[RMDB]
RNA sequence: GGGAACGACUCGAGUAGAGUCGAAAAAAGCAUUGAAAAGGGACGGUUUUUCUAAUUAGAACAUUCCGUAUAAUUUUGGUGCAAUAGCAUAGAGAGCCGCAGUGUUACUCUUCUUUACAAAUCCUGUUCGUAAAAUACCAUUCGUGGUAUUUUACGAAAAAGAAACAACAACAACAAC
Reactivity to DMS in 0.01 (KOAc 150mM, MgCl2 10mM, bicine 150mM(pH8.5), 24C), signal-to-noise 2, nucleotides 027 to 126: a080a070g010c000a020u010u010g000a010a020a020a040g000g000g020a010c020g020g000u000u000u010u000u000c000u000a250a160u050u020a070g010a030a010c100a050u010u000c000c000g000u010a070u020a060a170u000u000u000u000g000g000u000g020c000a050a070u020a050g010c200a090u010a040g030a040g030a140g000c050c030g030c170a060g000u040g010u000u020a080c000u000c000u000u000c040u010u020u010a040c160a070a100a130u010c000c010u000g020u000
Reactivity to 2A3 in 0.01 (KOAc 150mM, MgCl2 10mM, bicine 150mM(pH8.5), 24C), signal-to-noise 8, nucleotides 027 to 126: a000a000g010c020a010u030u060g020a000a010a010a020g140g030g050a010c010g010g000u030u010u000u000u000c040u020a290a300u250u210a110g000a020a010c030a050u010u030c000c000g030u020a070u070a120a090u020u010u010u020g020g000u010g000c000a060a090u060a100g040c060a050u120a060g030a010g000a000g030c000c050g140c210a120g040u080g070u240u090a160c000u000c000u070u040c010u050u140u040a080c080a030a090a040u040c000c000u040g040u010
Background
Chemical mapping of a 177-nucleotide RNA with DMS and 2A3. The data come from the RNA Mapping Database (RMDB), libraries RFM100 and RFMREP. For DMS the reverse transcriptase was MarathonRT. 2A3 is a SHAPE reagent: it acylates the 2'-hydroxyl of flexible nucleotides of all four kinds.